[RMDB]
RNA sequence: GGGAACGACUCGAGUAGAGUCGAAAAGAUAUGGACCCGUACUUUCUAUGAAGCACGUCGGAAACGACGUGUGGAGAAACGUACAGGGUCCUAAGUCAAAAUCCCAGACCCUUCGGGGUCUGGGAAAGUGAUUACAGAGGUUCGCCUCUGUAAUCACAAAAGAAACAACAACAACAAC
Reactivity to 2A3 in 0.01 (KOAc 150mM, MgCl2 10mM, bicine 150mM(pH8.5), 24C), signal-to-noise 1, nucleotides 027 to 126: g000a010u050a030u120g020g020a000c000c000c000g000u010a000c020u110u080u230c060u090a300u200g000a010a000g020c000a000c000g000u000c000g010g020a060a020a030c020g010a000c000g020u010g020u000g020g000a030g060a060a110a030c190g000u040a020c110a300g000g000g000u000c000c000u000a010a010g000u010c010a070a020a000a250u020c000c000c010a010g000a020c000c030c030u080u140c300g130g000g000g000u000c010u000g000g020g040a060a000a000
Reactivity to DMS in 0.01 (KOAc 150mM, MgCl2 10mM, bicine 150mM(pH8.5), 24C), signal-to-noise 1, nucleotides 027 to 126: g010a010u000a300u000g000g010a020c000c000c000g020u010a000c010u000u000u000c020u000a300u010g020a220a300g000c000a000c000g030u010c000g020g000a100a080a100c020g020a030c000g020u010g010u010g000g000a000g020a010a030a000c250g010u000a010c020a170g070g000g020u000c000c020u000a000a060g020u010c040a080a130a100a300u010c000c000c000a010g040a020c000c000c000u020u010c300g020g010g000g000u000c000u000g000g000g000a010a000a040